Record summary
Source: RMDB library OK2TST, as collected in RNAgym. An RNA of 177 nucleotides, treated with DMS and 2A3 and read out base by base. The RNA was probed in 150 mM KOAc, 10 mM MgCl2 and 150 mM bicine (pH 8.5) at 24 C. 2A3 adducts were read by reverse transcription with SuperScript II with manganese.
[RMDB]
RNA sequence: GGGAACGACUCGAGUAGAGUCGAAAAUACUGCAAGAAGCUUGGCUGCUUUCCAGUACCGAGUUAGAGCAGGCUGAGCUGCGUUCAGGGGCGAUUUUCUUAGCCGCGCUGACCCGUGCGGACCGUUAAAAAUCGUCAUAUUUCGAUAUGACGAUUUUAAAAGAAACAACAACAACAAC
Reactivity to DMS in 0.01 (KOAc 150mM, MgCl2 10mM, bicine 150mM(pH8.5), 24C), signal-to-noise 7, nucleotides 027 to 126: u010a100c030u000g000c100a100a100g000a140a050g010c010u000u000g010g010c040u000g010c020u000u000u000c140c090a120g000u010a130c170c110g000a080g010u010u000a040g000a050g010c010a040g020g000c010u000g000a020g000c040u000g010c050g020u000u000c060a040g010g010g010g010c040g010a060u000u000u000u010c060u010u000a130g010c010c000g000c020g010c050u010g000a110c060c050c050g010u000g010c030g000g000a100c110c090g010u010u010a020
Reactivity to 2A3 in 0.01 (KOAc 150mM, MgCl2 10mM, bicine 150mM(pH8.5), 24C), signal-to-noise 3, nucleotides 027 to 126: u090a010c020u030g050c010a030a030g080a070a010g090c010u020u020g020g010c030u020g000c000u070u020u030c040c020a030g060u070a170c040c090g050a050g080u090u150a010g020a010g040c030a020g140g000c010u010g020a010g010c020u020g020c030g030u040u070c030a030g060g000g100g020c050g030a020u090u050u040u070c030u060u090a000g000c010c000g000c010g000c030u050g060a060c020c010c010g030u020g000c010g020g040a050c020c020g030u030u060a100